The record gives the reactivity of an RNA of 177 nucleotides to DMS and 2A3. DMS adducts were read by reverse transcription with MarathonRT. Values cover nucleotides 27 to 126. High 2A3 reactivity points to a flexible backbone, as in loops and unpaired stretches. For DMS, 2,537 sequencing reads were counted.
[RMDB]
RNA sequence: GGGAACGACUCGAGUAGAGUCGAAAAAAACUCAUGGAAAGUUCCGUUCUGAAUUUGGGAGUUGGAAUUCUGAAAGUUAUUACGGGGCCUUCGAUGGUCGAAACUUUCGUUCGUAACUCAUCACCUCGUAGCAUAAAGAGUUCGCUCUUUAUGCUACAAAAGAAACAACAACAACAAC
Reactivity to DMS in 0.01 (KOAc 150mM, MgCl2 10mM, bicine 150mM(pH8.5), 24C), signal-to-noise 2, nucleotides 027 to 126: a090a070a040c070u010c020a090u000g000g020a110a080a110g010u000u000c050c020g020u010u000c040u010g010a120a080u010u000u010g020g000g000a020g020u000u010g010g010a050a050u010u010c120u020g010a020a020a010g000u000u010a050u000u020a130c200g010g010g000g000c030c010u000u000c270g000a080u000g010g010u000c010g020a060a030a020c020u000u000u000c010g010u000u000c020g020u020a040a040c010u000c020a080u000c050a090c140c100u000c200
Reactivity to 2A3 in 0.01 (KOAc 150mM, MgCl2 10mM, bicine 150mM(pH8.5), 24C), signal-to-noise 2, nucleotides 027 to 126: a000a000a010c060u070c050a050u110g030g030a100a050a020g040u130u020c050c010g030u070u010c030u030g210a230a190u120u110u180g080g000g010a020g000u040u060g060g040a040a060u140u030c040u080g030a020a030a010g000u000u040a030u090u080a090c120g250g020g020g000c040c000u050u170c120g220a240u120g030g020u060c050g010a030a010a030c040u000u010u010c030g030u010u000c010g060u050a040a010c000u020c020a080u080c010a090c050c040u070c090